[RMDB]
RNA sequence: GGGAACGACUCGAGUAGAGUCGAAAAAAGCAGGGUGUGAGAGAAACUCUCUCCCAGCGGGUUCGCGCAGCCACCCUUUUCGACUCUACUCGGGUUAGCUGCGCGAACUGGCUGGCGUUCCCCAGAAUAAACCCUAGGUAUUCGUACCUAGGGUUUAAAAAGAAACAACAACAACAAC
Reactivity to DMS in 0.01 (KOAc 150mM, MgCl2 10mM, bicine 150mM(pH8.5), 24C), signal-to-noise 3, nucleotides 027 to 126: a080a090g020c150a040g010g010g010u010g000u000g010a090g000a110g000a140a130a140c100u000c030u000c030u010c090c000c010a040g010c000g010g010g010u000u000c010g010c010g010c000a010g020c010c030a020c020c010c010u000u000u000u000c020g010a020c000u000c000u000a000c010u000c010g010g010g010u000u000a040g010c010u000g010c010g000c000g000a010a010c010u000g000g010c000u000g000g000c000g010u000u000c000c000c000c080a160g000a090a100
An RNA of 177 nucleotides, treated with DMS and read out base by base.
The RNA was probed in 150 mM KOAc, 10 mM MgCl2 and 150 mM bicine (pH 8.5) at 24 C.
In probing experiments dimethyl sulfate is read out at A N1 and C N3, which are open when not base-paired.
It was measured as part of the RMDB library M2PK90.